[RMDB]
RNA sequence: GGGAACGACUCGAGUAGAGUCGAAAAUUAAUGAUGUAUGAUGAGCCUUUUACCGGUCAAGAUCCAAUUUCCAUGGGGGUAUUGGUCAGAUUAAUACAACGAUUGAAUCAAUUAUUGCAUACCACCAAUCACGAUAUACCUUCGGGUAUAUCGUGAUAAAAGAAACAACAACAACAAC
Reactivity to DMS in 0.01 (KOAc 150mM, MgCl2 10mM, bicine 150mM(pH8.5), 24C), signal-to-noise 2, nucleotides 027 to 126: u000u000a070a140u010g010a100u010g000u000a080u000g000a120u010g000a110g030c030c000u000u000u000u000a080c140c060g010g050u000c100a130a070g000a010u010c010c030a030a170u030u010u000c030c050a160u010g000g020g000g000g030u000a010u010u000g010g010u000c090a090g000a070u000u000a050a060u000a150c040a050a080c140g010a060u000u000g000a090a160u000c030a030a070u010u010a040u000u010g010c030a000u000a080c060c140a070c090c070a050
Reactivity to 2A3 in 0.01 (KOAc 150mM, MgCl2 10mM, bicine 150mM(pH8.5), 24C), signal-to-noise 1, nucleotides 027 to 126: u070u050a020a100u080g120a020u090g080u020a000u040g050a040u040g020a040g060c010c000u170u160u040u100a090c040c000g010g000u020c020a020a040g040a000u050c040c020a060a130u030u060u000c030c030a050u090g100g000g000g020g000u010a010u010u000g040g020u000c000a030g010a070u090u070a060a040u020a070c090a030a000c080g030a020u010u110g140a030a120u030c010a060a030u040u180a080u080u150g040c040a030u070a040c000c060a040c020c000a020

Chemical mapping of a 177-nucleotide RNA with DMS and 2A3. For 2A3, 724 sequencing reads were counted. It was measured as part of the RMDB library OK2TST. DMS adducts were read by reverse transcription with MarathonRT. For 2A3 the reverse transcriptase was SuperScript II with manganese. The reactions ran in a buffer of 150 mM KOAc, 10 mM MgCl2 and 150 mM bicine (pH 8.5), at 24 C.